[RMDB]
RNA sequence: GGGAACGACUCGAGUAGAGUCGAAAAGAAGAGCCGGGCUAACAAAGGUGGGAGGCACCCAACCCUUCGCAAGAGCCGAGUGGGAAGGCUAAGCGAAACCAAGACAAAAUGCUUAUAAAUAAUGCAACAUGUAUCGGGUAUUCGUACCCGAUACAUGAAAAGAAACAACAACAACAAC
Reactivity to 2A3 in 0.01 (KOAc 150mM, MgCl2 10mM, bicine 150mM(pH8.5), 24C), signal-to-noise 2, nucleotides 027 to 126: g080a020a040g010a000g010c020c020g000g050g000c010u030a100a080c030a130a100a010g010g000u040g020g030g030a090g050g000c000a050c010c010c020a010a050c000c000c020u030u040c030g000c070a120a040g010a030g190c020c020g020a010g050u200g000g070g000a080a040g000g000c000u040a030a000g010c010g020a000a010a000c040c020a080a040g070a090c070a040a150a020a030u080g000c000u120u120a090u090a190a180a020u170a130a070u130g020c000a060a020
Reactivity to DMS in 0.01 (KOAc 150mM, MgCl2 10mM, bicine 150mM(pH8.5), 24C), signal-to-noise 2, nucleotides 027 to 126: g010a160a090g000a080g060c050c060g000g010g020c050u000a070a100c080a120a080a100g000g000u000g010g000g020a070g010g000c080a060c020c010c030a020a120c070c020c040u000u030c040g000c070a030a150g010a050g020c020c020g000a140g020u010g010g000g000a110a120g000g000c010u000a050a250g020c010g000a030a040a080c140c050a040a030g010a060c100a060a060a090a080u000g030c020u000u020a170u000a080a040a140u010a030a080u000g000c060a090a150
Source: RMDB library M2PK90, as collected in RNAgym.
The record gives the reactivity of an RNA of 177 nucleotides to 2A3 and DMS.
The DMS profile rests on 1,263 reads.
The reactions ran in a buffer of 150 mM KOAc, 10 mM MgCl2 and 150 mM bicine (pH 8.5), at 24 C.